[RMDB]
This 177-nucleotide RNA was probed chemically with 2A3. Conditions: 150 mM KOAc, 10 mM MgCl2 and 150 mM bicine (pH 8.5), 24 C. High 2A3 reactivity points to a flexible backbone, as in loops and unpaired stretches. It was measured as part of the RMDB library OK1LIB.
RNA sequence: GGGAACGACUCGAGUAGAGUCGAAAAGCGUUGGCAACGGAACGCCACUAGCCCGUUUCUGUCUGCUGCCAACUACAAUUAAGCUUGCGUAGUAUAUGCAGAGCCGCAUACCUCUUAUUCCAAAAUCAGUAUGCACACGCUUCGGCGUGUGCAUACUAAAAGAAACAACAACAACAAC
Reactivity to 2A3 in 0.01 (KOAc 150mM, MgCl2 10mM, bicine 150mM(pH8.5), 24C), signal-to-noise 2, nucleotides 027 to 126: g030c010g000u060u110g070g040c080a100a050c090g060g020a010a000c010g000c060c000a090c090u050a040g020c000c000c010g000u010u040u100c080u060g040u000c010u090g040c000u000g020c020c000a040a010c010u050a000c030a040a020u300u140a110a050g060c040u000u030g010c040g030u050a030g000u050a160u020a000u220g010c010a010g030a020g050c020c020g010c060a030u090a180c010c000u130c000u060u010a070u120u030c020c050a080a080a040a010u070c050